[RMDB]
RNA sequence: GGGAACGACUCGAGUAGAGUCGAAAAGAAAGAAAGAUUCCGGUGGUGUUAUAAGAAUGGUUGUUUUGACAGCUGCUGGUGUGGAACGUUUGAUAUUCUACCCUGAUGAAUAUGAACAACUAUAAAAUCAUAUACCCCGUUUCGACGGGGUAUAUGAAAAAGAAACAACAACAACAAC
Reactivity to DMS in 0.01 (KOAc 150mM, MgCl2 10mM, bicine 150mM(pH8.5), 24C), signal-to-noise 2, nucleotides 027 to 126: g010a120a140a120g000a100a080a170g000a130u000u000c020c040g020g000u010g020g040u010g010u010u000a080u000a080a080g000a100a060u010g010g000u000u000g010u000u000u000u000g020a100c180a020g000c050u000g040c140u000g000g020u000g050u010g020g000a020a060c150g030u000u030u030g020a090u020a120u000u000c010u000a110c010c020c010u030g000a140u000g000a040a040u000a090u000g000a010a020c020a050a030c040u000a060u000a040a070a070a080
Structure probing data (DMS) for a 177-nucleotide construct. For DMS the reverse transcriptase was MarathonRT. It was measured as part of the RMDB library OK2TST.